[RMDB]
RNA sequence: GGGAACGACUCGAGUAGAGUCGAAAAUCGAGAUGGCACUUGAACUGGGUGUUAGCCCCCACCGGAGAGGAGAGAAGGACGGUGUCAUCGCCACUGUGGCCGGUGGCUGGCGGCCAGCCAGUUAGCGCUCCAGAGUAUCCUUCGGGAUACUCUGGAGAAAAGAAACAACAACAACAAC
Reactivity to DMS in 0.01 (KOAc 150mM, MgCl2 10mM, bicine 150mM(pH8.5), 24C), signal-to-noise 2, nucleotides 027 to 126: u020c050g010a110g000a100u000g000g000c010a020c020u010u020g020a050a140c060u000g000g010g000u010g030u020u020a140g020c010c000c300c070c000a070c030c010g030g000a140g010a150g020g000a070g010a140g010a110a060g010g000a090c110g000g010u000g020u000c020a060u010c040g010c070c040a070c100u000g000u010g030g000c060c050g030g000u000g010g030c080u000g000g010c000g010g020c140c050a080g010c040c020a030g010u000u000a050g020c120g010
Reactivity to 2A3 in 0.01 (KOAc 150mM, MgCl2 10mM, bicine 150mM(pH8.5), 24C), signal-to-noise 1, nucleotides 027 to 126: u110c040g010a010g020a070u090g070g000c040a010c050u050u120g080a130a030c040u060g020g030g010u010g080u100u120a090g020c000c000c000c010c000a010c000c020g050g010a090g010a060g150g030a050g020a000g040a170a040g090g020a000c050g070g050u010g040u090c060a010u050c030g010c010c010a020c050u120g010u090g140g010c030c020g090g000u010g020g010c000u020g050g000c000g020g070c080c010a020g000c000c010a000g010u020u050a040g070c020g020
Annotation: Structure probing data (DMS and 2A3) for a 177-nucleotide construct. The 2A3 profile rests on 1,264 reads. The RNA was probed in 150 mM KOAc, 10 mM MgCl2 and 150 mM bicine (pH 8.5) at 24 C.